The record gives the reactivity of an RNA of 177 nucleotides to DMS and 2A3.
RNA sequence: GGGAACGACUCGAGUAGAGUCGAAAAGAUAUGGAACCGUGUAGGGAGCUCGCCAUCGGAAACGAUGGGUCUGAGCUUUGAUCUACCGGUUCCUAAGUCAAAACGCCGUUAGUUCGCUAACGGCGAAGCUAUACCCUGAGUUCGCUCAGGGUAUAGCAAAAGAAACAACAACAACAAC
Reactivity to DMS in 0.01 (KOAc 150mM, MgCl2 10mM, bicine 150mM(pH8.5), 24C), signal-to-noise 1, nucleotides 027 to 126: g000a010u000a020u020g010g000a040a000c000c000g020u010g000u000a030g010g030g000a000g020c000u000c010g000c000c000a000u000c000g000g000a020a000a010c000g000a010u000g000g000g000u010c070u020g020a000g050c000u010u000u010g000a030u000c000u010a010c000c000g010g000u000u000c000c000u000a000a050g000u000c000a100a140a110a280c040g010c000c000g010u000u010a000g000u010u030c240g030c010u000a000a000c010g000g000c000g010a010a030
Reactivity to 2A3 in 0.01 (KOAc 150mM, MgCl2 10mM, bicine 150mM(pH8.5), 24C), signal-to-noise 2, nucleotides 027 to 126: g000a000u030a000u080g000g000a000a010c000c000g030u080g020u200a010g000g000g030a010g000c010u000c010g140c010c000a030u020c000g000g000a030a000a000c010g000a010u010g050g000g080u030c170u230g000a020g010c000u020u140u000g000a000u000c000u000a000c000c010g000g020u000u000c000c000u000a000a010g000u010c010a000a000a060a130c030g010c000c000g010u000u000a010g000u030u090c300g010c260u000a000a000c000g000g000c000g000a000a000
It was measured as part of the RMDB library TTRDES.